[RMDB]
RNA sequence: GGGAACGACUCGAGUAGAGUCGAAAACGGGGUCGGUGAAAGUCCGAACCGGCGGUUACAGUCCGCGACCCGGUCGCCACCAGCGACCGGUUGACCAGGUGAAAUUCCUGGACCGACGGUUAAAGUCAAAAUCAUCCAACGUUCGCGUUGGAUGAAAUCAACUAGCUAGGUUCGCCUAGCUAGUUGAAAAAGAAACAACAACAACAAC
Reactivity to DMS in 0.01 (KOAc 150mM, MgCl2 10mM, bicine 150mM(pH8.5), 24C), signal-to-noise 1, nucleotides 027 to 156: c130g000g050g060g060u000c010g070g070u000g000a110a230a300g020u000c000c040g020a090a140c030c000g000g000c000g010g030u000u000a160c080a040g060u000c000c000g080c000g000a270c300c000c000g000g070u000c020g150c030c040a270c270c140a300g030c000g010a030c010c000g010g000u000u010g000a040c000c000a030g060g000u000g000a000a300a150u000u010c000c000u000g000g030a010c030c030g030a080c010g000g000u000u000a110a090a130g000u010c010a080a140a110a150u000c000a010u000c010c000a030a040c030g000u010u000c260g060c000g050u010u010g030g000a000u000g000a000a090a080